[RMDB]
RNA sequence: GGGAACGACUCGAGUAGAGUCGAAAAGAUAUGGAACCAGAAGGGAGACGGUCGGAAACGAUACGUCAUCGAUCUUCGGUUCCUAAGUCAAAAGAGUCUAAAAGUAGUUCGCUACUUUUAGACUCAAGAUGCUAAAUAACUUCGGUUAUUUAGCAUCAAAAGAAACAACAACAACAAC
Reactivity to 2A3 in 0.01 (KOAc 150mM, MgCl2 10mM, bicine 150mM(pH8.5), 24C), signal-to-noise 6, nucleotides 027 to 126: g020a010u060a030u120g010g010a010a010c050c090a270g010a010a020g030g010g010a030g000a000c010g020g020u020c010g010g050a060a040a020c010g010a010u300a300c010g010u030c010a030u230c010g060a060u010c010u020u000c000g000g010u000u000c000c000u010a010a000g000u010c010a000a000a100a200g000a000g000u010c000u000a000a000a000a010g010u010a000g010u030u090c280g000c140u000a010c000u010u000u000u000a000g010a000c000u000c000a000a010
Reactivity to DMS in 0.01 (KOAc 150mM, MgCl2 10mM, bicine 150mM(pH8.5), 24C), signal-to-noise 6, nucleotides 027 to 126: g000a030u000a300u000g000g000a010a020c010c000a130g030a020a010g000g000g000a060g010a010c000g010g010u000c000g010g000a140a080a220c000g010a010u000a070c010g020u010c000a180u010c160g010a070u010c000u000u000c010g000g000u000u000c000c000u000a010a050g010u010c030a090a070a110a110g000a020g000u000c000u000a000a010a010a010g010u000a010g010u000u020c250g010c000u000a000c000u000u000u000u000a000g000a000c000u000c000a010a050
Source: RMDB library TTRDEL, as collected in RNAgym. An RNA of 177 nucleotides, treated with 2A3 and DMS and read out base by base. For 2A3 the reverse transcriptase was SuperScript II with manganese. Conditions: 150 mM KOAc, 10 mM MgCl2 and 150 mM bicine (pH 8.5), 24 C. For 2A3, 17,374 sequencing reads were counted.